[RMDB]
RNA sequence: GGGAACGACUCGAGUAGAGUCGAAAAUCUCCGUGCAAGUUUUGCGCGGCGAAUUGUAGUCUAUAGAGGCGUGAUCAGUGUGGGCGCUUGGGGCAAGUUCCUUGGAAGAGGACAGCAUGGAGGGUGACUUAUACUAGUUCUUCGGAACUAGUAUAAGAAAAGAAACAACAACAACAAC
Reactivity to DMS in 0.01 (KOAc 150mM, MgCl2 10mM, bicine 150mM(pH8.5), 24C), signal-to-noise 2, nucleotides 027 to 126: u000c010u000c000c010g030u000g000c010a030a150g020u000u020u010u000g020c000g020c000g000g010c090g010a020a100u000u010g010u010a110g000u000c040u010a070u010a140g010a070g000g010c040g020u010g010a110u010c060a110g010u010g010u010g000g000g000c090g000c110u000u000g010g010g000g020c100a060a100g010u010u000c010c020u010u000g000g030a120a130g010a050g010g000a060c080a110g010c080a080u010g000g000a090g010g000g010u000g010a160
Reactivity to 2A3 in 0.01 (KOAc 150mM, MgCl2 10mM, bicine 150mM(pH8.5), 24C), signal-to-noise 4, nucleotides 027 to 126: u010c010u000c010c000g000u010g010c020a150a300g030u090u300u300u070g000c000g000c000g000g000c020g000a010a020u040u070g050u090a040g050u010c030u050a080u040a160g060a030g040g000c020g010u050g020a070u070c030a030g060u040g010u080g130g030g020c080g030c120u060u090g010g000g010g020c030a020a030g030u120u030c010c000u000u020g050g020a080a040g000a010g020g010a010c010a020g050c010a040u050g020g030a040g030g000g010u040g010a010